[RMDB]
RNA sequence: GGGAACGACUCGAGUAGAGUCGAAAAUCGUGGGGUGCAGGCGAUCCCAGGCGUACUCGGCACCCUCGCGGAAGGCACCGACGAAGCCGUGAUUCGCUUCCAGCCGAUACCUGCUGAUGGCUGCUGCGAAUAACGGGUCGUUCGCGACCCGUUAUUCAAAAGAAACAACAACAACAAC
Reactivity to DMS in 0.01 (KOAc 150mM, MgCl2 10mM, bicine 150mM(pH8.5), 24C), signal-to-noise 4, nucleotides 027 to 126: u010c040g050u010g010g010g000g010u000g010c030a110g010g000c060g010a070u010c010c020c020a120g010g010c040g030u020a120c170u000c090g020g030c020a070c060c010c020u000c050g030c050g000g020a120a070g020g020c140a100c080c030g000a050c050g020a090a120g010c020c040g000u010g000a100u000u000c060g010c010u000u000c140c050a070g000c010c020g000a150u000a070c080c030u010g000c060u000g010a100u000g010g010c020u000g010c070u000g000c130
Reactivity to 2A3 in 0.01 (KOAc 150mM, MgCl2 10mM, bicine 150mM(pH8.5), 24C), signal-to-noise 2, nucleotides 027 to 126: u110c030g000u040g030g030g010g000u040g010c020a000g000g060c030g050a030u010c010c010c000a030g030g070c000g030u080a080c030u010c020g020g040c020a070c000c090c000u020c020g060c050g070g010a080a030g020g000c040a030c100c030g100a130c040g070a070a020g060c000c000g020u030g020a170u090u040c000g000c010u060u010c040c020a000g000c020c020g060a040u100a110c050c020u070g040c020u070g060a100u070g030g000c000u050g010c010u060g020c070

The record gives the reactivity of an RNA of 177 nucleotides to DMS and 2A3. 2A3 adducts were read by reverse transcription with SuperScript II with manganese. The 2A3 profile rests on 2,224 reads. DMS (dimethyl sulfate) methylates the pairing face of unpaired adenines and cytosines. The reactions ran in a buffer of 150 mM KOAc, 10 mM MgCl2 and 150 mM bicine (pH 8.5), at 24 C.